[RMDB]
RNA sequence: GGGAACGACUCGAGUAGAGUCGAAAAUUGGUCCUACUCCCCAAGAGGCCAAAUCCCCAGGGAGCUCAUGCUGUGGGGCUUUGAGCAAGCUCAUUACUGGCGCCAUUACUGCCCCGGUCGUCAUGUAAAAUAGGGUAGGAUUCGUCCUACCCUAUUUAAAAGAAACAACAACAACAAC
Reactivity to 2A3 in 0.01 (KOAc 150mM, MgCl2 10mM, bicine 150mM(pH8.5), 24C), signal-to-noise 8, nucleotides 027 to 126: u020u000g020g010u030c010c000u030a090c050u090c000c000c000c000a040a020g050a090g030g000c010c000a020a030a020u060c010c000c000c010a030g070g020g010a040g020c010u030c080a080u140g010c040u050g030u150g070g010g030g000c000u080u050u080g050a050g020c030a060a010g010c010u020c040a080u040u180a050c040u030g030g000c010g010c010c010a060u100u140a070c050u100g010c000c000c010c010g010g010u060c020g010u010c020a050u110g030u160a030
Reactivity to DMS in 0.01 (KOAc 150mM, MgCl2 10mM, bicine 150mM(pH8.5), 24C), signal-to-noise 9, nucleotides 027 to 126: u010u000g000g000u000c010c010u010a080c070u010c010c000c010c030a110a070g000a130g000g000c010c010a010a040a150u000c020c000c000c110a100g000g000g000a100g010c030u000c080a080u010g000c040u010g010u020g010g010g010g020c030u010u010u010g010a080g010c060a100a070g000c030u000c050a120u020u020a070c050u000g010g000c030g000c040c030a090u020u010a080c100u010g010c020c010c030c050g000g000u010c040g010u000c030a060u010g010u020a060